[RMDB]
RNA sequence: GGGAACGACUCGAGUAGAGUCGAAAAGUGUUACACCACCUGAGAGGGCGGUGCAAUCAUAAAUGUAUAUCAAUACAGGGAUUGCUUGUUGGAAUGUCAAGCAUGAACGAGGAAUUCCUAGUAAGCGGCUGAAGAUGUGUUUCGACACAUCUUCAGCAAAAGAAACAACAACAACAAC
Reactivity to DMS in 0.01 (KOAc 150mM, MgCl2 10mM, bicine 150mM(pH8.5), 24C), signal-to-noise 1, nucleotides 027 to 126: g000u020g020u000u000a120c010a030c000c000a060c030c000u000g070a190g060a080g010g000g070c150g020g000u000g010c050a060a030u010c040a040u000a040a100a180u030g000u000a020u010a130u060c180a060a130u000a020c000a020g000g000g000a010u000u000g010c000u000u000g000u010u000g020g010a070a070u010g010u000c180a000a120g010c020a010u010g010a060a040c030g000a060g000g020a060a060u000u000c000c000u000a080g030u010a040a080g000c140g030
Reactivity to 2A3 in 0.01 (KOAc 150mM, MgCl2 10mM, bicine 150mM(pH8.5), 24C), signal-to-noise 2, nucleotides 027 to 126: g030u020g000u040u020a010c000a000c010c000a030c000c020u000g010a010g030a020g040g000g020c010g000g060u000g000c000a030a030u050c010a000u110a140a220a130u140g110u100a080u030a030u180c120a180a000u050a070c010a030g020g010g000a000u000u010g170c000u000u000g040u000u020g020g140a090a010u030g080u110c080a050a080g050c000a030u030g010a000a000c000g000a030g000g000a020a010u000u000c010c010u010a050g050u030a150a000g040c010g140